[RMDB]
RNA sequence: GGGAACGACUCGAGUAGAGUCGAAAAGGGAUCCAUGCUGGAAAAAGAUAUCACAGGGAGAAGAUUUUUUUGAAGUUGAAGAGAGAAUACGGACAGGAAAGUUAAGAUGUCAUUCUAGAACUUUAUUGGGAGGGCAUCUCCACCCUACAACAAAUUCUCACGGAAAAUAGUUCGCUAUUUUCCGUGAAAAAGAAACAACAACAACAAC
Reactivity to DMS in 0.01 (KOAc 150mM, MgCl2 10mM, bicine 150mM(pH8.5), 24C), signal-to-noise 1, nucleotides 027 to 156: g040g000g020a090u000c040c010a090u010g020c040u000g000g000a070a040a100a070a090g000a180u030a040u000c020a060c120a060g020g080g010a120g010a050a150g010a040u000u000u000u010u010u000u070g000a040a170g020u000u000g020a050a150g000a060g010a110g000a080a070u000a100c080g050g030a090c090a050g040g010a060a010a040g000u000u000a040a110g010a090u000g010u010c050a100u000u000c010u000a090g020a040a080c120u010u000u000a120u040u000g010g000g000a040g020g000g010c020a030u000c070u010c060c060a090c040c010c000u010a040c040a080a000c050a010a020a170u000u000c010
Reactivity to 2A3 in 0.01 (KOAc 150mM, MgCl2 10mM, bicine 150mM(pH8.5), 24C), signal-to-noise 2, nucleotides 027 to 156: g020g000g010a010u020c000c010a060u080g000c020u040g050g060a060a070a000a030a070g040a060u110a020u090c060a060c020a050g020g050g020a040g020a040a000g010a080u130u030u030u020u010u090u210g020a070a010g010u060u070g050a090a020g020a010g000a000g010a040a000u110a110c040g020g010a010c040a020g080g040a030a030a070g040u100u090a020a010g030a010u040g000u030c050a020u100u000c020u030a050g070a140a200c070u150u130u160a150u140u110g000g040g000a010g000g000g000c010a030u000c000u000c010c000a050c000c010c000u110a060c020a080a000c010a010a090a080u100u040c030